[RMDB]
RNA sequence: GGGAACGACUCGAGUAGAGUCGAAAACUAGGUACUGAUGGAUUUUCAUUUGACCCUAUUAUAGGUUUUGGACCUAAUGGAGCUAAUCCACAUGGUGAACCUGGAAAUGCACUUGUGAAACCAGGAGACUAAUCCGCGAGUUCGCUCGCGGAUUAGUAAAAGAAACAACAACAACAAC
Reactivity to 2A3 in 0.01 (KOAc 150mM, MgCl2 10mM, bicine 150mM(pH8.5), 24C), signal-to-noise 1, nucleotides 027 to 126: c040u000a000g120g020u110a130c010u040g070a190u070g020g010a110u020u000u060u160c110a180u150u220u150g140a230c000c000c000u010a070u300u000a050u050a020g210g000u050u000u180u260g060g020a020c000c000u000a020a020u080g000g010a000g000c000u010a000a110u020c030c000a060c070a110u120g000g260u180g030a060a060c000c000u010g000g000a080a270a000u130g090c020a000c060u100u180g080u080g160a020a020a000c000c000a010g050g060a000g000
Reactivity to DMS in 0.01 (KOAc 150mM, MgCl2 10mM, bicine 150mM(pH8.5), 24C), signal-to-noise 1, nucleotides 027 to 126: c030u000a030g030g010u000a010c030u000g000a090u020g000g000a050u010u040u000u020c090a150u000u010u040g000a250c040c060c010u130a050u000u040a070u000a120g000g000u000u000u020u010g010g050a010c000c000u030a210a140u000g000g000a070g000c300u040a130a050u000c010c000a060c070a110u000g110g000u000g000a070a060c000c000u020g000g040a130a140a100u030g000c030a130c040u000u000g000u000g000a040a130a160c100c020a000g000g000a120g000